[RMDB]
RNA sequence: GGGAACGACUCGAGUAGAGUCGAAAAGUAUGAUUUUAAUGAACCUCUUAAUUGCGUACAUAAUGUUUAUGACAAUUUUGUACCAUGGUUUGAGAGUAAAUUUGGUUUUAUUCCAACAGAUGGUUUGAUGAAAUAGGUUCUUCGGAACCUAUUUCAUAAAAGAAACAACAACAACAAC
Reactivity to 2A3 in 0.01 (KOAc 150mM, MgCl2 10mM, bicine 150mM(pH8.5), 24C), signal-to-noise 1, nucleotides 027 to 126: g070u080a140u080g140a130u050u020u100u290a170a170u270g050a030a080c020c000u040c030u010u050a120a020u070u160g130c070g000u000a000c060a000u050a000a020u050g080u000u090u170a250u220g130a020c010a010a020u010u010u000u250g000u060a000c000c000a030u020g090g000u060u090u110g090a110g000a000g000u020a060a040a000u160u140u070g020g080u040u000u000u040a030u010u090c050c000a080a030c000a030g230a020u080g050g030u060u230u160g080
Reactivity to DMS in 0.01 (KOAc 150mM, MgCl2 10mM, bicine 150mM(pH8.5), 24C), signal-to-noise 2, nucleotides 027 to 126: g010u000a070u010g000a090u000u000u000u000a030a080u000g020a070a070c190c000u000c010u010u000a080a110u000u000g010c180g030u000a010c000a010u010a020a030u000g000u000u000u030a100u060g000a040c010a040a040u000u000u000u010g010u000a010c020c000a040u010g010g010u000u000u000g000a060g000a020g000u010a010a060a060u000u010u020g000g000u000u010u000u000a030u010u000c000c000a040a060c200a080g010a030u010g020g000u010u010u000g010
Conditions: 150 mM KOAc, 10 mM MgCl2 and 150 mM bicine (pH 8.5), 24 C. Structure probing data (2A3 and DMS) for a 177-nucleotide construct. The DMS profile rests on 1,707 reads. The data come from the RNA Mapping Database (RMDB), library OK2TST.